Conditions: 150 mM KOAc, 10 mM MgCl2 and 150 mM bicine (pH 8.5), 24 C. Structure probing data (2A3 and DMS) for a 177-nucleotide construct. DMS adducts were read by reverse transcription with MarathonRT. The 2A3 profile rests on 401 reads. For 2A3 the reverse transcriptase was SuperScript II with manganese. 2A3 is a SHAPE reagent: it acylates the 2'-hydroxyl of flexible nucleotides of all four kinds.

RNA sequence: GGGAACGACUCGAGUAGAGUCGAAAAGGUGGUAACCCCUCGCAGAAAAGUCGAGAUAAGGCACUCUCUAUCAGAAUGGAUGUCUUGCUGCUAUAAUAGAUAGAGAAGGUUAUAGCAGACUAUAGAUUACCAACUUGUUCUUCGGAACAAGUUGGUAAAAAGAAACAACAACAACAAC
Reactivity to 2A3 in 0.01 (KOAc 150mM, MgCl2 10mM, bicine 150mM(pH8.5), 24C), signal-to-noise 1, nucleotides 027 to 126: g090g020u040g040g000u080a110a090c020c000c000c000u050c000g000c000a000g300a160a210a030a020g090u190c020g020a060g000a120u130a130a150g000g010c000a010c050u000c000u000c020u020a040u050c000a050g160a260a060u100g110g000a030u020g120u040c030u070u180g040c000u000g000c000u000a000u000a000a000u000a000g140a010u010a000g110a010g020a060a000g070g000u000u000a000u000a000g000c000a000g010a010c020u100a000u080a130g050a000u030
Reactivity to DMS in 0.01 (KOAc 150mM, MgCl2 10mM, bicine 150mM(pH8.5), 24C), signal-to-noise 1, nucleotides 027 to 126: g060g030u000g010g020u000a100a130c000c000c010c050u010c010g050c110a210g000a030a150a110a090g000u030c020g000a060g010a130u000a090a240g020g000c060a210c000u010c000u000c000u000a040u000c140a080g020a100a040u000g000g000a090u050g000u000c020u000u000g040c030u000g000c000u000a000u020a000a000u000a000g000a020u050a080g010a060g020a100a020g020g010u000u000a000u000a020g040c010a010g010a180c050u110a050u020a050g000a130u010